[RMDB]
RNA sequence: GGGAACGACUCGAGUAGAGUCGAAAAGAUAUGGACUCGAUAAGUCACUGGACCAUCAGUGAGAUACCUGUAGUCUCGGAAACGAGACUACAGGAAGGUCCACUGACUUUUGACGAGUCCUAAGUCAUCUUUAUGAUGUGUUCGCACAUCAUAAAGAAAAAGAAACAACAACAACAAC
Reactivity to DMS in 0.01 (KOAc 150mM, MgCl2 10mM, bicine 150mM(pH8.5), 24C), signal-to-noise 3, nucleotides 027 to 126: g010a030u000a120u010g000g000a010c000u000c000g010a110u000a020a000g020u000c010a000c190u010g020g000a010c010c030a150u000c260a190g020u020g000a190g030a220u010a150c000c010u010g010u000a000g000u000c000u000c000g000g000a040a030a070c000g020a020g000a000c000u000a020c010a000g000g000a040a050g020g000u010c000c000a020c070u000g000a030c000u000u000u010u000g020a210c110g000a040g000u000c000c000u000a000a080g010u000c020a150
Reactivity to 2A3 in 0.01 (KOAc 150mM, MgCl2 10mM, bicine 150mM(pH8.5), 24C), signal-to-noise 3, nucleotides 027 to 126: g000a010u050a020u110g010g010a000c000u010c030g030a040u010a050a010g010u000c010a000c030u010g000g000a000c080c000a120u300c170a150g300u190g300a290g070a110u300a290c000c010u000g020u000a000g000u000c000u000c000g030g000a010a030a000c000g000a000g000a000c000u000a010c000a000g000g000a000a010g000g000u000c010c010a000c010u010g000a010c010u040u080u040u190g300a100c010g000a000g010u000c000c000u000a000a000g000u000c010a080

An RNA of 177 nucleotides, treated with DMS and 2A3 and read out base by base. Reactivities are given for positions 27 through 126.